An RNA of 207 nucleotides, treated with DMS and 2A3 and read out base by base.
Conditions: 150 mM KOAc, 10 mM MgCl2 and 150 mM bicine (pH 8.5), 24 C.
Reactivities are given for positions 27 through 156.
RNA sequence: GGGAACGACUCGAGUAGAGUCGAAAAGGGGCUCUGACAAUGCAAUUGGAUGAUUCCCUGAACAUAUCUGCUUUGGGAUUGGGAAUAAACACGCAUGCGCCGAUCACCGUAGGCGUGGACGGAGUCUCCUGCGCCCUCGGCGUAGGACUCGGAGUAGAAGGUUAGAUCAUUUCGAUGAUCUAACCUUAAAAGAAACAACAACAACAAC
Reactivity to DMS in 0.01 (KOAc 150mM, MgCl2 10mM, bicine 150mM(pH8.5), 24C), signal-to-noise 3, nucleotides 027 to 156: g000g010g010g030c170u010c030u000g020a240c030a040a080u010g010c110a050a150u000u010g010g000a180u000g010a150u000u000c010c010c000u010g000a110a130c060a100u000a050u000c050u000g010c040u000u000u000g000g020g000a170u010u010g040g000g000a100a120u010a090a060a080c030a030c010g010c000a040u000g020c000g040c010c010g000a150u000c020a100c210c020g010u000a030g040g020c020g010u000g000g030a130c060g000g010a120g000u000c030u000c000c020u000g020c020g000c000c010c170u000c130g030g020c010g040u000a040g000g010a030c010u000c010g000g000a070g020u010a110g010
Reactivity to 2A3 in 0.01 (KOAc 150mM, MgCl2 10mM, bicine 150mM(pH8.5), 24C), signal-to-noise 2, nucleotides 027 to 156: g020g000g000g000c010u010c020u070g070a030c060a050a030u190g090c030a040a240u130u070g060g000a040u080g020a050u080u050c000c000c010u020g000a050a000c010a010u220a090u030c060u090g060c030u070u090u080g000g020g040a050u060u070g040g020g030a040a020u100a130a110a010c040a020c070g000c010a010u050g000c020g000c040c100g070a090u190c020a020c060c040g000u020a010g000g070c000g010u010g000g010a010c010g040g000a020g010u020c080u020c020c000u000g000c000g010c020c010c020u060c140g060g000c010g000u000a000g000g010a010c000u010c010g040g020a050g020u110a030g040
The 2A3 profile rests on 1,447 reads.